[RMDB]
RNA sequence: GGGAACGACUCGAGUAGAGUCGAAAAGAUAUGGAACUGAACUACUCUUACGCGAGGAGCAUCGAUCCGCUUAACUCGGAAACGAGUUAAGCGGGGAGCUCCUCCCCCAAGAGCAGUUCCUAAGUCAGAUAAGCAUGAAGUUCGCUUCAUGCUUAUCAAAAGAAACAACAACAACAAC
Reactivity to 2A3 in 0.01 (KOAc 150mM, MgCl2 10mM, bicine 150mM(pH8.5), 24C), signal-to-noise 2, nucleotides 027 to 126: g010a020u070a080u210g000g000a020a020c020u010g030a080a030c070u270a090c010u300c000u070u010a050c140g060c120g100a000g010g000a000g030c020a110u300c050g070a080u010c010c000g000c000u000u010a010a030c000u000c000g060g000a070a040a070c010g000a000g000u000u000a000a000g000c010g000g000g000g010a000g000c000u000c020c010u000c000c000c000c000c000a020a000g010a010g000c000a010g000u000u000c000c000u030a150a010g090u030c030a010
Reactivity to DMS in 0.01 (KOAc 150mM, MgCl2 10mM, bicine 150mM(pH8.5), 24C), signal-to-noise 3, nucleotides 027 to 126: g000a050u000a300u000g000g010a000a020c010u000g000a100a080c070u010a300c020u000c000u000u010a100c220g010c300g010a020g010g000a010g040c000a300u020c250g010a050u000c000c000g040c000u000u000a010a000c000u000c000g010g010a080a050a200c000g010a040g000u000u000a020a010g010c010g000g000g010g000a010g010c000u000c010c000u000c010c010c050c190c150a030a010g010a010g000c000a020g000u000u000c000c010u000a010a100g010u000c010a220
An RNA of 177 nucleotides, treated with 2A3 and DMS and read out base by base. High DMS reactivity at an A or C suggests that its Watson-Crick edge is free. The DMS profile rests on 2,485 reads. Source: RMDB library TTRINS, as collected in RNAgym.